RNA sequence: GGGAACGACUCGAGUAGAGUCGAAAACUGGUAAAGGUGGAUUUCAUCCCAGACAGUUACAGUCAUUGCCAUGGGCACAGCUCCUAACUUAGUAACUCCAUGUAACUGGUACUCAGUGUAGCUGAAACUUUUAUGGAGUGUUCGCACUCCAUAAAAGAAAAGAAACAACAACAACAAC
Reactivity to DMS in 0.01 (KOAc 150mM, MgCl2 10mM, bicine 150mM(pH8.5), 24C), signal-to-noise 4, nucleotides 027 to 126: c040u010g010g020u010a060a110a120g010g040u000g020g010a220u010u010u020c120a120u010c020c020c010a180g010a080c030a040g000u000u000a040c070a080g010u000c070a060u000u000g000c040c030a110u010g010g000g000c080a110c090a050g010c030u000c040c020u010a070a070c050u000u000a070g010u000a050a090c110u010c040c050a080u000g010u010a040a040c090u000g000g010u010a030c070u000c040a040g010u000g020u000a060g010c030u010g000a110a110a110
Reactivity to 2A3 in 0.01 (KOAc 150mM, MgCl2 10mM, bicine 150mM(pH8.5), 24C), signal-to-noise 3, nucleotides 027 to 126: c020u050g030g080u130a050a080a080g070g050u070g040g060a100u140u200u190c030a050u060c010c000c020a010g030a010c020a020g010u060u060a010c010a040g030u060c040a080u020u120g000c030c000a080u090g000g010g010c040a020c010a090g010c000u000c010c010u030a060a050c020u020u010a010g030u040a080a050c070u000c020c010a050u090g040u090a090a050c040u010g050g000u020a020c010u000c030a040g030u010g010u080a020g000c020u030g030a100a080a130
The record gives the reactivity of an RNA of 177 nucleotides to DMS and 2A3. The reactions ran in a buffer of 150 mM KOAc, 10 mM MgCl2 and 150 mM bicine (pH 8.5), at 24 C.